[RMDB]
RNA sequence: GGGAACGACUCGAGUAGAGUCGAAAAUGCAUUAGAUAGUACUGGCAGAGGAGCUGACAUGGCAGGAGUUUAAUGAUAAUUUUUUCCAGCUUUUAGCUGUCUUUGUCACUUGAUUGUCCGCAUAUAACAAGGAAUAUGUUUGCUAGAAAUAGCAAUAGAUAAUCGUCAGGUUCGCCUGACGAUUAUCAAAAGAAACAACAACAACAAC
Reactivity to 2A3 in 0.01 (KOAc 150mM, MgCl2 10mM, bicine 150mM(pH8.5), 24C), signal-to-noise 1, nucleotides 027 to 156: u040g000c000a000u050u090a060g030a070u070a060g100u040a120c020u030g000g020c050a030g000a020g040g020a000g000c030u030g030a030c040a130u220g010g040c030a030g040g000a010g020u060u140u170a100a050u090g150a050u020a150a160u200u040u020u080u140u020c000c030a010g000c030u030u160u000u090a010g000c000u010g090u090c000u000u010u030g000u010c000a010c050u060u150g030a110u080u090g020u040c010c010g060c070a030u130a010u000a070a040c030a060a020g040g040a050a000u050a000u170g080u040u050u000g000c010u010a010g050a060a090a020u010a000g030c010a010a010u050a060